[RMDB]
RNA sequence: GGGAACGACUCGAGUAGAGUCGAAAAGGGCCAGGCCUCCCGCUUCCGACAACCAUUGGAGCGCCUCGUGCUGGGCGGGCCUAAAACUACAUUUCCCAAGGAUCACAGCAGGCACUAACCGGAAGGGCGAACCGGCAGUAUUCGUACUGCCGGUUCGAAAAGAAACAACAACAACAAC
Reactivity to 2A3 in 0.01 (KOAc 150mM, MgCl2 10mM, bicine 150mM(pH8.5), 24C), signal-to-noise 1, nucleotides 027 to 126: g010g010g020c000c000a050g060g040c000c020u030c000c000c000g000c020u070u020c010c030g090a130c060a250a010c070c040a120u050u160g070g000a070g020c040g000c000c000u090c020g000u050g000c020u040g030g080g000c000g060g000g000c000c000u030a030a020a000a000c020u100a020c000a150u020u060u020c000c030c000a000a020g180g090a030u060c070a060c040a070g180c040a040g050g060c000a010c070u040a020a020c010c000g000g000a110a040g090g010g000
Reactivity to DMS in 0.01 (KOAc 150mM, MgCl2 10mM, bicine 150mM(pH8.5), 24C), signal-to-noise 1, nucleotides 027 to 126: g030g000g000c300c010a040g000g000c030c000u000c030c000c000g060c030u030u020c160c010g000a200c040a080a160c130c300a200u220u010g020g000a140g000c040g000c000c000u000c170g000u030g000c050u000g000g020g040c000g000g000g010c040c000u000a000a070a090a170c290u000a100c210a150u000u000u000c000c000c070a130a010g000g010a100u000c050a050c120a010g010c070a000g000g000c130a040c000u090a070a150c050c000g000g000a040a190g000g000g000